[RMDB]
RNA sequence: GGGAACGACUCGAGUAGAGUCGAAAACAUGAAGUGCGCGAUUACGAUCGUGAACACCAAGAAUCAAGAUAUCCUGCUGUUCAUCGCCCAUAGGAUUAUCCACAAAUGAUUCCUCGUAAUUGCGUUGAUCAUCGCCCUAUUUCGAUAGGGCGAUGAUAAAAGAAACAACAACAACAAC
Reactivity to DMS in 0.01 (KOAc 150mM, MgCl2 10mM, bicine 150mM(pH8.5), 24C), signal-to-noise 2, nucleotides 027 to 126: c030a070u080g000a020a080g040u030g090c000g010c010g000a020u000u000a000c030g000a030u000c260g000u030g030a040a050c160a050c270c080a060a060g020a040a020u050c120a170a150g030a110u050a020u020c000c030u010g000c140u000g010u000u010c030a070u020c180g020c080c060c020a110u030a040g000g000a000u020u020a000u000c010c220a250c260a140a000a050u000g000a110u000u000c000c030u000c000g000u000a000a010u000u000g030c070g030u020u020g030
Reactivity to 2A3 in 0.01 (KOAc 150mM, MgCl2 10mM, bicine 150mM(pH8.5), 24C), signal-to-noise 5, nucleotides 027 to 126: c060a030u180g110a150a080g120u060g080c000g000c000g010a010u000u010a010c040g030a050u100c070g100u110g130a040a010c060a050c070c020a050a040g030a030a050u130c070a100a020g030a080u070a040u050c000c000u020g050c080u010g020u090u060c060a150u110c190g050c000c030c000a040u100a030g040g000a030u130u060a010u030c030c040a070c060a100a080a010u160g020a120u030u050c000c010u030c020g000u000a000a020u000u000g000c010g050u020u040g000
The record gives the reactivity of an RNA of 177 nucleotides to DMS and 2A3. 2A3 adducts were read by reverse transcription with SuperScript II with manganese. Values are in units of 0.01, from 0 to 300, in steps of 10. It was measured as part of the RMDB library OK1LIB. The 2A3 profile rests on 3,133 reads. For DMS, 2,287 sequencing reads were counted. The reactions ran in a buffer of 150 mM KOAc, 10 mM MgCl2 and 150 mM bicine (pH 8.5), at 24 C.